[RMDB]
An RNA of 177 nucleotides, treated with DMS and 2A3 and read out base by base. DMS adducts were read by reverse transcription with MarathonRT. Values cover nucleotides 27 to 126. For DMS, 2,059 sequencing reads were counted. For 2A3 the reverse transcriptase was SuperScript II with manganese.

RNA sequence: GGGAACGACUCGAGUAGAGUCGAAAAGCAGCACUGGAUCGAACUCGGCCGUUUCAAGCAUCGGCAUCGUUGGUGUCGUGGACUGCACCAACGGUAUCACUGACCGGGUUGCCGUUGCCAUUGCGGGCAUUUACGGCGCUUUCGAGCGCCGUAAAUGAAAAGAAACAACAACAACAAC
Reactivity to DMS in 0.01 (KOAc 150mM, MgCl2 10mM, bicine 150mM(pH8.5), 24C), signal-to-noise 2, nucleotides 027 to 126: g010c060a160g000c020a060c100u000g000g000a070u010c050g010a100a030c030u000c000g030g020c030c020g020u010u010u010c170a080a060g020c120a110u000c100g000g010c060a010u000c000g010u000u000g000g020u010g010u010c200g030u000g010g000a060c160u000g000c000a030c010c000a010a000c000g000g050u000a010u000c030a060c140u000g000a060c040c000g000g000g000u000u000g000c140c010g010u000u010g020c020c040a070u000u000g000c030g000g000g000
Reactivity to 2A3 in 0.01 (KOAc 150mM, MgCl2 10mM, bicine 150mM(pH8.5), 24C), signal-to-noise 1, nucleotides 027 to 126: g050c020a030g000c010a020c040u040g020g030a060u120c010g030a010a030c030u000c030g040g000c010c020g030u050u140u110c120a090a020g050c020a080u050c060g050g000c000a000u000c000g000u020u010g000g000u040g070u060c100g020u100g160g130a100c080u080g000c010a020c060c010a000a000c000g000g020u030a050u050c050a000c100u060g110a140c000c010g010g020g040u070u060g090c040c020g030u020u080g000c040c030a040u010u110g000c000g050g070g040